RNA sequence: GGGAACGACUCGAGUAGAGUCGAAAACGUAAAAAUCAACGGGGAGAAGAGAUUUCUCUGGGCUGCACUUGACGUUGAGAGCAGGGAAGUUCUCGCAGUCUGGAUUACAACAACCAGAAACUGGUGGAUUCUUCGCAUUAUUCGUAAUGCGAAGAAUAAAAGAAACAACAACAACAAC
Reactivity to DMS in 0.01 (KOAc 150mM, MgCl2 10mM, bicine 150mM(pH8.5), 24C), signal-to-noise 4, nucleotides 027 to 126: c060g020u010a020a050a080a130a110u010c030a050a070c050g000g000g010g000a130g000a080a070g000a120g000a090u000u000u000c030u000c010u000g010g010g000c030u010g010c040a070c070u010u010g010a100c140g000u010u010g000a090g010a060g000c020a070g000g000g000a040a100g010u000u000c010u000c020g000c030a050g020u000c010u000g010g000a070u010u010a090c150a070a090c180a110a060c000c010a010g010a070a060a070c080u000g010g010u000g000g000
Reactivity to 2A3 in 0.01 (KOAc 150mM, MgCl2 10mM, bicine 150mM(pH8.5), 24C), signal-to-noise 3, nucleotides 027 to 126: c010g030u070a010a030a040a000a150u110c030a040a070c080g010g010g070g000a050g040a140a030g030a030g020a030u010u080u060c030u000c000u030g010g080g020c020u090g050c030a040c100u090u150g120a040c050g060u050u140g050a010g000a040g030c030a020g010g040g040a050a040g000u030u020c020u000c010g030c000a010g010u000c000u010g000g070a070u160u200a050c050a180a000c010a040a030c030c010a010g030a050a190a040c060u040g040g000u060g050g050